[RMDB]
This 177-nucleotide RNA was probed chemically with DMS and 2A3. For 2A3 the reverse transcriptase was SuperScript II with manganese.
RNA sequence: GGGAACGACUCGAGUAGAGUCGAAAAAAAGCUAUCUGCACGCGGCGGUGGAACUGGCGGAAGCGCGCGGUUUGCCCGUCGUGGCGACCAACGACGUGCGCUUUAUCGACAGCAGCGACUUUGACGCGUAACCUAUCAAAUUCGUUUGAUAGGUUACAAAAGAAACAACAACAACAAC
Reactivity to DMS in 0.01 (KOAc 150mM, MgCl2 10mM, bicine 150mM(pH8.5), 24C), signal-to-noise 9, nucleotides 027 to 126: a050a050a070g010c060u000a070u000c060u000g020c060a090c060g020c040g010g010c040g010g000u000g000g010a100a110c030u000g010g010c020g010g000a040a030g000c020g010c010g020c020g010g000u000u000u000g030c020c010c020g010u010c250g010u000g010g010c020g000a050c070c070a100a110c190g010a180c150g010u000g010c020g010c010u000u010u000a070u010c030g010a050c040a040g000c090a100g010c050g010a050c060u000u000u000g010a080c100g010c130
Reactivity to 2A3 in 0.01 (KOAc 150mM, MgCl2 10mM, bicine 150mM(pH8.5), 24C), signal-to-noise 9, nucleotides 027 to 126: a000a000a000g090c060u070a060u060c040u080g010c050a010c070g030c020g030g010c020g040g010u060g050g020a070a070c020u020g030g000c010g020g010a020a010g020c010g000c000g000c020g040g070u020u060u220g060c010c010c010g210u140c070g030u110g010g000c000g010a030c020c020a090a050c090g160a040c090g010u020g000c020g000c000u050u050u030a190u120c030g030a030c020a020g020c010a010g020c020g040a040c040u120u110u150g040a030c030g010c010